RNA sequence: GGGAACGACUCGAGUAGAGUCGAAAACAGCCGUGCACCACACCGAUCCACGUCGGCGGAUUGUCAACCUUGACGACGUAGCGGACCACGAUCUCGUAGCACAGUGCGAUGAGCCAGAGGCCCGUCGCAUCCCAAGGGGAUUCGUCCCCUUGGGAUGAAAAGAAACAACAACAACAAC
Reactivity to 2A3 in 0.01 (KOAc 150mM, MgCl2 10mM, bicine 150mM(pH8.5), 24C), signal-to-noise 7, nucleotides 027 to 126: c010a010g060c020c020g030u050g010c020a040c060c030a040c020a020c050c050g010a030u020c030c020a040c070g030u020c020g100g010c040g010g050a190u050u140g070u070c030a080a140c060c090u100u150g030a020c030g010a010c030g030u050a050g130c050g010g030a030c010c010a020c030g020a040u030c020u020c060g040u050a030g020c030a030c030a080g070u050g080c020g010a030u040g000a020g020c010c010a180g080a170g130g000c030c010c010g020u030c020g000
Reactivity to DMS in 0.01 (KOAc 150mM, MgCl2 10mM, bicine 150mM(pH8.5), 24C), signal-to-noise 8, nucleotides 027 to 126: c090a140g020c030c050g020u010g010c030a090c060c060a090c110a090c080c070g000a060u000c030c090a100c140g010u000c030g010g010c040g010g000a110u000u000g010u000c120a070a130c150c070u010u000g010a060c020g010a030c020g020u000a160g000c060g010g000a060c030c050a110c100g000a060u000c020u000c050g010u000a110g020c050a060c090a090g010u010g000c000g010a030u000g000a040g010c010c020a190g010a170g020g010c010c000c010g000u000c040g010
Chemical mapping of a 177-nucleotide RNA with 2A3 and DMS. The data come from the RNA Mapping Database (RMDB), library OK2TST. For 2A3 the reverse transcriptase was SuperScript II with manganese.